[RMDB]
RNA sequence: GGGAACGACUCGAGUAGAGUCGAAAACCGACCAGGCGCAUUAACUUGUCCUCGUAGGCGUCCGUCCUACGUCCGACAAGACGACCAAAACACCCCGUGUCUCGCUGUGCCUUCGGGUGCCGAGCACUCUUAGUAAGCGGUUCGCCGCUUACUAAGAAAAAGAAACAACAACAACAAC
Reactivity to DMS in 0.01 (KOAc 150mM, MgCl2 10mM, bicine 150mM(pH8.5), 24C), signal-to-noise 2, nucleotides 027 to 126: c020c010g020a130c120c090a070g000g000c080g030c150a090u000u020a070a120c000u000u000g020u000c010c100u000c010g020u000a010g000g020c020g040u000c170c220g020u020c010c020u000a010c000g000u010c070c250g010a000c010a020a000g000a200c060g010a130c020c080a100a050a110a100c180a230c000c000c010c000g010u010g000u000c000u010c020g000c150u000g010u000g000c020c030u000u000c190g060g010g010u000g000c030c020g030a020g010c020a040c020
Reactivity to 2A3 in 0.01 (KOAc 150mM, MgCl2 10mM, bicine 150mM(pH8.5), 24C), signal-to-noise 2, nucleotides 027 to 126: c010c010g020a050c070c080a060g000g040c060g000c080a110u050u190a100a080c010u000u010g000u000c000c000u010c000g000u000a030g000g040c030g150u180c170c160g050u160c070c000u000a000c010g010u000c010c010g000a000c000a000a010g030a030c000g110a120c030c020a100a000a040a010c090a090c010c000c000c010g010u010g050u020c000u000c020g070c120u090g000u020g000c000c000u010u030c180g110g000g000u000g010c000c010g020a000g020c000a020c000